[RMDB]
RNA sequence: GGGAACGACUCGAGUAGAGUCGAAAACCCAAGAGCUCCAUAGUUGAAGCUGACCUUGGAGAUUAUGGGAAAGUGCAGUUUGAAUGUCUUAUGGACUACGGAGUUGACUUGGAAGAGGUGUAUACAGGUUGCUAGUAUCGUUCGCGAUACUAGCAACAAAAGAAACAACAACAACAAC
Reactivity to DMS in 0.01 (KOAc 150mM, MgCl2 10mM, bicine 150mM(pH8.5), 24C), signal-to-noise 3, nucleotides 027 to 126: c010c000c000a100a120g010a130g000c030u000c030c010a090u000a060g000u000u010g030a070a120g000c040u000g000a100c030c020u000u010g010g020a140g010a110u000u010a090u010g010g000g010a070a100a060g000u000g010c020a040g010u010u000u000g020a110a120u020g000u010c070u000u010a110u000g010g000a010c020u000a040c100g000g000a070g010u000u010g010a100c060u000u000g000g000a120a080g010a070g010g010u000g010u010a070u000a060c180a120g000
Reactivity to 2A3 in 0.01 (KOAc 150mM, MgCl2 10mM, bicine 150mM(pH8.5), 24C), signal-to-noise 2, nucleotides 027 to 126: c000c000c000a030a010g090a010g030c010u040c060c000a100u020a030g020u010u050g060a080a010g090c050u020g040a120c000c000u060u050g110g010a170g020a150u250u200a100u300g060g060g110a000a080a030g020u090g020c030a030g000u030u070u180g250a150a100u130g060u070c000u120u120a140u300g070g020a000c000u010a000c090g030g030a010g000u040u060g060a090c040u060u080g050g000a000a030g050a040g040g070u070g100u080a050u030a090c000a010g010
The data come from the RNA Mapping Database (RMDB), library OK2TRN.
Structure probing data (DMS and 2A3) for a 177-nucleotide construct.
For 2A3 the reverse transcriptase was SuperScript II with manganese.